[RMDB]
RNA sequence: GGGAACGACUCGAGUAGAGUCGAAAAAAGAGGCCCAAGCGACUGUUUACCAAAAACACAGGACUCUGCAUAAGCCGCGAGGCGACGUAUAGGGUCUGACGCCUGCCCGGUGCCGGAAGGUCACGCGCGAUAUUCUAGGAUUCGUCCUAGAAUAUCGAAAAGAAACAACAACAACAAC
Reactivity to 2A3 in 0.01 (KOAc 150mM, MgCl2 10mM, bicine 150mM(pH8.5), 24C), signal-to-noise 9, nucleotides 027 to 126: a000a000g110a030g020g010c010c010c010a020a010g040c020g060a080c030u050g060u070u080u110a130c050c030a090a080a030a040a020c050a010c010a030g030g020a030c020u010c020u040g000c020a040u040a180a040g020c010c010g020c030g030a060g020g010c010g020a030c070g050u070a050u110a140g020g000g010u010c020u020g020a010c030g020c010c000u030g010c020c010c010g050g020u050g010c020c000g050g020a060a010g030g010u040c020a010c050g050c010g000
Reactivity to DMS in 0.01 (KOAc 150mM, MgCl2 10mM, bicine 150mM(pH8.5), 24C), signal-to-noise 9, nucleotides 027 to 126: a070a090g010a100g010g010c010c040c040a090a110g000c050g010a090c080u010g010u000u000u010a130c120c100a060a070a070a070a060c090a060c110a140g000g000a040c020u010c070u000g000c050a050u010a130a200g020c030c000g010c190g000a170g010g010c020g010a040c220g010u000a040u000a070g010g000g010u000c010u000g000a120c100g010c020c010u000g000c030c020c030g010g020u010g010c020c020g010g030a080a070g010g010u010c030a040c070g000c100g020